[RMDB]
RNA sequence: GGGAACGACUCGAGUAGAGUCGAAAAAAUUGGGUUAAAACGGUGGGGGACGAGCCCGUAACAUCCGUCCUAACGGCGACAGACUGCACGGCCCUGCCUCUUAGGUGUGUUCAAUGAACAGUCGUUCUGGCCCCUAAGGCGUUCGCGCCUUAGGGAAGAUGACAAAUAAAUUCGUUUAUUUGUCAUCAAAAGAAACAACAACAACAAC
Reactivity to DMS in 0.01 (KOAc 150mM, MgCl2 10mM, bicine 150mM(pH8.5), 24C), signal-to-noise 2, nucleotides 027 to 156: a060a070u000u000g020g030g020u000u010a030a040a080a050c040g010g010u000g030g010g000g030g000a100c080g010a080g000c050c000c030g070u010a070a060c040a080u000c030c010g020u010c030c030u010a070a090c180g040g000c040g030a090c060a050g000a050c050u030g010c170a140c030g040g010c030c030c020u000g030c020c030u000c050u010u000a000g020g000u000g000u000g020u000u000c060a060a090u010g000a070a090c030a100g010u010c000g030u000u000c010u010g030g040c080c000c000c000u030a000a050g020g010c000g020u010u000c300g010c010g010c000c000u000u000a000g000g000g000a000a030
Reactivity to 2A3 in 0.01 (KOAc 150mM, MgCl2 10mM, bicine 150mM(pH8.5), 24C), signal-to-noise 5, nucleotides 027 to 156: a000a020u130u120g020g000g030u070u060a080a060a030a050c050g010g020u070g020g010g020g000g000a030c050g030a030g060c010c010c010g010u010a000a040c020a130u040c020c010g020u020c010c040u060a090a020c050g030g010c030g020a020c010a050g080a060c050u060g010c040a030c050g030g000c020c000c000u030g020c020c040u080c060u070u140a030g010g000u050g000u010g010u070u040c080a130a120u150g030a050a020c020a030g010u000c000g000u020u010c010u040g130g010c010c010c000c000u000a000a000g000g000c000g000u040u040c160g000c000g000c060c000u000u010a000g000g000g000a000a010
Chemical mapping of a 207-nucleotide RNA with DMS and 2A3. For 2A3 the reverse transcriptase was SuperScript II with manganese. For DMS the reverse transcriptase was MarathonRT. The 2A3 profile rests on 5,401 reads.